[RMDB]
RNA sequence: GGGAACGACUCGAGUAGAGUCGAAAAAACGGCUGGCCACGUUCAUCAUCGGCUACAGGGGCUGAAUCCCCUGGGUUGUCACCAGAAGCGUUCGCAGUCGGGCGUUUCGCAAGUGGUGGAGCACUUCUCACCAUACGCUAUUCGUAGCGUAUGGUGAAAAAGAAACAACAACAACAAC
Reactivity to DMS in 0.01 (KOAc 150mM, MgCl2 10mM, bicine 150mM(pH8.5), 24C), signal-to-noise 4, nucleotides 027 to 126: a050a030c050g000g020c020u000g000g020c010c010a050c000g010u010u000c090a100u020c090a090u030c140g010g010c000u010a070c000a020g010g010g010g000c220u020g010a190a180u040c010c000c000c000u010g000g000g010u000u000g000u010c020a000c050c040a230g000a060a070g000c020g000u000u010c010g000c220a130g010u050c050g000g000g000c020g010u000u000u000c000g010c180a090a130g020u020g010g000u000g000g000a040g000c070a050c030u010u000c200
Reactivity to 2A3 in 0.01 (KOAc 150mM, MgCl2 10mM, bicine 150mM(pH8.5), 24C), signal-to-noise 4, nucleotides 027 to 126: a000a000c010g000g000c010u020g030g000c030c020a040c030g060u130u070c010a100u020c000a000u080c060g010g000c000u050a060c000a000g010g040g020g030c070u230g080a080a170u300c000c020c000c010u020g000g000g000u040u050g060u030c060a050c080c010a030g010a030a000g020c010g020u030u010c010g000c140a160g070u190c020g020g040g000c010g000u000u010u030c010g000c030a090a080g090u040g060g020u000g020g010a000g010c000a020c020u040u030c010
This 177-nucleotide RNA was probed chemically with DMS and 2A3. Reactivities are rounded to 0.1 and cut off at 0 and 3. Values cover nucleotides 27 to 126. It was measured as part of the RMDB libraries RFM100 and RFMREP.